[RMDB]
RNA sequence: GGGAACGACUCGAGUAGAGUCGAAAAGAUAUGGAGUUGGCAUGACAUGUCACUUCGGAAACGAAAUGACAACAGCAUGCAACUCCUAAGUCAAAGGGUAAGUGUUCCUUCGGGAACACUUACCCAACAUCUUUAUACAGUUCGCUGUAUAAAGAUGAAAAGAAACAACAACAACAAC
Reactivity to 2A3 in 0.01 (KOAc 150mM, MgCl2 10mM, bicine 150mM(pH8.5), 24C), signal-to-noise 5, nucleotides 027 to 126: g000a000u030a010u080g000g000a010g030u020u060g260g240c010a000u010g060a300c060a210u020g050u010c000a000c010u000u000c000g000g000a030a020a000c000g000a000a010a000u020g010a000c010a140a050c070a170g040c000a000u000g000c010a000a000c000u010c000c000u000a020a000g000u000c040a070a100a110g000g000g010u010a010a000g010u000g000u010u000c000c030u020u080c300g030g010g000a000a020c000a000c000u010u000a000c000c000c000a000a000
Reactivity to DMS in 0.01 (KOAc 150mM, MgCl2 10mM, bicine 150mM(pH8.5), 24C), signal-to-noise 5, nucleotides 027 to 126: g010a030u000a250u000g000g000a020g020u000u000g020g010c000a010u000g010a090c100a180u000g000u000c000a010c020u000u000c000g000g000a060a040a110c000g000a000a010a010u000g000a010c000a020a090c270a190g000c010a010u010g010c000a030a000c000u000c000c000u000a000a030g000u000c030a140a130a130g000g000g000u000a000a010g020u000g010u000u000c010c000u000u000c200g010g000g000a010a010c000a000c000u000u000a000c000c000c010a000a030
The data come from the RNA Mapping Database (RMDB), library TTRDEL. Chemical mapping of a 177-nucleotide RNA with 2A3 and DMS. For DMS, 8,621 sequencing reads were counted. Conditions: 150 mM KOAc, 10 mM MgCl2 and 150 mM bicine (pH 8.5), 24 C. For 2A3, 17,336 sequencing reads were counted. For 2A3 the reverse transcriptase was SuperScript II with manganese.